The record gives the reactivity of an RNA of 177 nucleotides to DMS and 2A3. For DMS the reverse transcriptase was MarathonRT.
RNA sequence: GGGAACGACUCGAGUAGAGUCGAAAAGAUAUGGAACCGCCAAGACAUGCUCGUCAGUCGGAAACGACUGUGAGCAACAGCUUGGUCGGUUCCUAAGUCAAAAGUGACCAGGUUCGCCUGGUCACAACGCCAAUUAUAUCUUCGGAUAUAAUUGGCGAAAAGAAACAACAACAACAAC
Reactivity to DMS in 0.01 (KOAc 150mM, MgCl2 10mM, bicine 150mM(pH8.5), 24C), signal-to-noise 4, nucleotides 027 to 126: g020a050u010a300u010g000g000a030a000c000c000g000c000c010a010a020g000a100c110a280u020g000c010u000c010g000u020c010a010g020u000c000g020g010a060a060a140c000g010a020c000u000g030u020g000a010g010c000a030a050c290a170g010c000u010u000g000g010u020c030g060g000u000u000c000c000u000a010a060g020u000c050a110a050a110a140g010u000g000a000c000c000a020g000g020u000u010c280g020c000c000u000g000g000u010c000a000c000a040a070
Reactivity to 2A3 in 0.01 (KOAc 150mM, MgCl2 10mM, bicine 150mM(pH8.5), 24C), signal-to-noise 3, nucleotides 027 to 126: g000a000u030a010u100g000g000a000a020c000c010g020c030c000a010a000g030a170c120a240u210g000c020u040c040g240u270c060a010g020u000c010g030g000a050a050a010c000g010a000c020u010g000u020g000a000g070c010a010a020c030a010g070c010u010u000g020g000u060c020g000g010u000u000c000c000u000a010a010g000u000c020a010a020a060a170g010u000g000a010c010c010a000g050g030u050u120c290g090c080c000u000g000g010u010c000a000c000a000a000